RNA sequence: GGGAACGACUCGAGUAGAGUCGAAAAAUACAGCGUAAUCGAGCGGAGGAAAACGCCACUCCGAAAAUCCGGUACGAUUAUGAUCCCACUGCGUCGACGCUAGAUGCAGAACCGGAUUGCCGAGGAACCUGAGUAUUCAAUUCGUUGAAUACUCAGGAAAAGAAACAACAACAACAAC
Reactivity to DMS in 0.01 (KOAc 150mM, MgCl2 10mM, bicine 150mM(pH8.5), 24C), signal-to-noise 5, nucleotides 027 to 126: a060u020a080c220a070g000c040g010u010a030a020u000c050g030a250g020c020g000g000a030g000g010a080a040a100a130c130g030c090c120a090c030u000c010c010g010a070a080a040a050u010c000c000g010g000u000a140c080g000a060u010u000a040u010g010a100u000c010c000c000a300c020u000g000c020g040u000c010g000a120c160g020c220u000a080g000a020u000g010c020a020g000a120a050c020c000g000g000a020u000u000g000c160c050g000a060g010g000a100a140
Reactivity to 2A3 in 0.01 (KOAc 150mM, MgCl2 10mM, bicine 150mM(pH8.5), 24C), signal-to-noise 4, nucleotides 027 to 126: a000u130a030c060a020g030c010g040u050a040a050u050c020g020a030g050c030g030g010a030g020g110a060a150a060a040c060g020c050c020a050c010u000c000c010g030a070a030a000a030u010c020c000g000g040u070a060c050g030a060u080u060a060u230g080a060u040c000c010c010a030c010u010g000c000g000u010c000g040a080c090g070c260u100a050g000a010u010g000c000a000g010a040a010c020c010g000g000a020u010u050g050c030c030g080a050g040g090a020a030
Chemical mapping of a 177-nucleotide RNA with DMS and 2A3.
The reactions ran in a buffer of 150 mM KOAc, 10 mM MgCl2 and 150 mM bicine (pH 8.5), at 24 C.
For 2A3, 5,349 sequencing reads were counted.
As a SHAPE reagent, 2A3 marks flexible, mostly unpaired nucleotides at the ribose 2'-OH.
2A3 adducts were read by reverse transcription with SuperScript II with manganese.